[RMDB]
RNA sequence: GGGAACGACUCGAGUAGAGUCGAAAACUGUCGUUCUUCGGAACGACAGAAAGAACGCGUGGGUCACGCAUGGAGGAGCGUGUGGGACGCGACAAACCCAAAAAAGCGUUCGGUUCGCCGAACGCAACAUAUAUGUCGAGUUCGCUCGACAUAUAUGAAAAGAAACAACAACAACAAC
Reactivity to 2A3 in 0.01 (KOAc 150mM, MgCl2 10mM, bicine 150mM(pH8.5), 24C), signal-to-noise 9, nucleotides 027 to 126: c000u000g000u000c000g010u000u000c000u030u030c180g100g010a000a000c000g010a000c000a000g000a000a010a000g020a090a020c010g010c010g020u030g030g200g100u070c010a000c020g010c030a050u130g110g080a130g080g040a110g010c020g000u010g000u030g020g130g040a000c000g010c000g010a000c030a020a080a050c000c000c000a070a100a010a010a010a010g000c000g000u010u000c010g000g020u040u050c200g020c040c000g000a000a000c010g000c000a000a010
Reactivity to DMS in 0.01 (KOAc 150mM, MgCl2 10mM, bicine 150mM(pH8.5), 24C), signal-to-noise 8, nucleotides 027 to 126: c000u000g010u000c000g010u000u000c000u000u010c180g030g000a010a000c000g010a000c000a000g000a030a050a120g010a120a110c020g000c010g020u000g010g010g010u010c000a010c010g010c010a060u000g010g000a120g020g010a100g010c010g020u000g010u000g010g020g010a040c010g010c010g010a070c090a060a080a120c000c000c010a010a060a080a070a090a100g010c000g010u000u000c000g000g000u010u010c220g020c010c000g000a010a000c000g020c000a020a030